[RMDB]
RNA sequence: GGGAACGACUCGAGUAGAGUCGAAAAACAAUGCGGAGAUUGAACAGCCGAAAAAAGAGAAAUCUGCAUUUGCGUUAUUACUGGAGAAACAGCAGGGAAAGUAAAUGGACUUAUCUCAUAUUAACAGUCCACAUUUCGAUACGGCUGUUCGUUAUGCUCCUUUAUACUCAUUCGUGAGUAUAAAGGAAAAAGAAACAACAACAACAAC
Reactivity to DMS in 0.01 (KOAc 150mM, MgCl2 10mM, bicine 150mM(pH8.5), 24C), signal-to-noise 4, nucleotides 027 to 156: a040c020a040a070u000g020c030g010g010a110g000a170u000u010g010a040a030c010a030g020c010c000g020a000a030a090a090a090a110g010a150g000a050a070a080u000c020u000g020c010a060u010u000u000g020c020g000u000u000a100u000u000a080c070u000g010g010a190g010a200a080a130c030a020g020c020a050g010g010g010a040a040a090g010u010a020a040a050u000g010g000a030c000u000u000a100u010c080u000c090a080u000a130u000u000a020a060c080a080g010u000c000c010a020c060a140u000u000u000c060g010a200u000a120c020g010g010c000u000g000u000u000c010g000u000u010a080u000g020c070
Reactivity to 2A3 in 0.01 (KOAc 150mM, MgCl2 10mM, bicine 150mM(pH8.5), 24C), signal-to-noise 7, nucleotides 027 to 156: a010c060a040a040u090g010c010g050g030a050g030a120u170u240g000a080a000c000a000g000c020c010g110a070a050a020a010a040a010g130a020g040a020a050a050u040c020u040g000c030a040u030u040u140g050c020g030u040u060a080u100u130a090c070u080g110g010a070g070a090a140a020c050a020g060c020a030g020g050g050a050a080a020g040u120a030a050a130u060g000g010a000c010u040u060a070u130c090u030c130a060u100a110u180u180a070a060c040a040g010u010c020c000a030c010a030u060u110u070c040g030a060u040a180c020g000g010c000u000g000u010u000c000g000u010u020a060u120g000c000
Chemical mapping of a 207-nucleotide RNA with DMS and 2A3. For DMS, 10,337 sequencing reads were counted. Values cover nucleotides 27 to 156. The reactions ran in a buffer of 150 mM KOAc, 10 mM MgCl2 and 150 mM bicine (pH 8.5), at 24 C. DMS adducts were read by reverse transcription with MarathonRT.